[RMDB]
RNA sequence: GGGAACGACUCGAGUAGAGUCGAAAAAAAUAAAGCUGUUCUUUCAGCCAUGUCUCUGAAACCAUUGAGAAGGUUUCCAGGUACAUUUUGGGCAGUAAAGAAGAUGUGGACUGGGCAUUCCUGUAAUCCCAGCGCUGUGGGAGCCUGAGGCAGGAGAGCUAAUGCGUAUGUUCGCAUACGCAUUAGCAAAAGAAACAACAACAACAAC
Reactivity to 2A3 in 0.01 (KOAc 150mM, MgCl2 10mM, bicine 150mM(pH8.5), 24C), signal-to-noise 2, nucleotides 027 to 156: a000a000a010u240a040a010a000g020c030u020g020u030u000c010u070u170u100c060a030g030c000c020a060u040g010u000c000u030c000u080g000a030a040a020c020c030a130u180u300g160a200g060a210a170g050g010u020u010u000c110c020a020g000g040u040a000c010a010u060u100u110u220g030g020g000c030a040g110u150a020a050a050g060a030a010g020a030u080g060u040g030g050a110c020u020g000g030g000c040a020u020u060c000c020u040g020u080a080a070u080c030c010c000a020g010c080g000c060u080g040u070g040g000g030a000g020c030c040u040g040a060g030g000c020a030g000g040a040g010a010